[RMDB]
RNA sequence: GGGAACGACUCGAGUAGAGUCGAAAAACACCAUCUUUGGUGUACAUGGGCCACGCAAUGCACACGGUGCGCAUGCAGGAGAAGCGGAACGUGCGGAAGGCUGAGAGGGCCAAAGAGGCGGGCGCUGUCCCGCACCCACUUUCGAGUGGGUGCGGGAAAAAGAAACAACAACAACAAC
Reactivity to 2A3 in 0.01 (KOAc 150mM, MgCl2 10mM, bicine 150mM(pH8.5), 24C), signal-to-noise 2, nucleotides 027 to 126: a000c050a010c020c000a150u040c190u120u210u140g000g000u010g000u020a020c030a070u090g020g050g040c010c000a070c050g000c020a000a100u250g030c130a060c020a060c220g080g000u030g050c030g040c100a060u180g000c040a010g000g060a070g000a040a050g040c040g000g170a070a080c000g000u030g000c060g010g130a100a020g010g000c010u020g000a040g010a050g050g060g000c010c020a030a100a000g090a020g070g000c010g000g000g000c060g000c000u020g090
Reactivity to DMS in 0.01 (KOAc 150mM, MgCl2 10mM, bicine 150mM(pH8.5), 24C), signal-to-noise 1, nucleotides 027 to 126: a130c020a080c010c010a130u020c090u010u000u000g000g050u000g000u000a030c060a010u000g060g050g000c000c090a120c030g000c000a090a040u010g020c070a030c080a100c020g030g000u000g040c080g040c090a020u010g050c190a120g030g020a080g000a170a010g010c010g000g010a120a150c110g030u000g030c000g020g000a050a050g000g000c010u050g000a150g010a110g010g000g040c000c000a030a130a030g000a070g020g000c080g000g000g000c000g060c010u010g060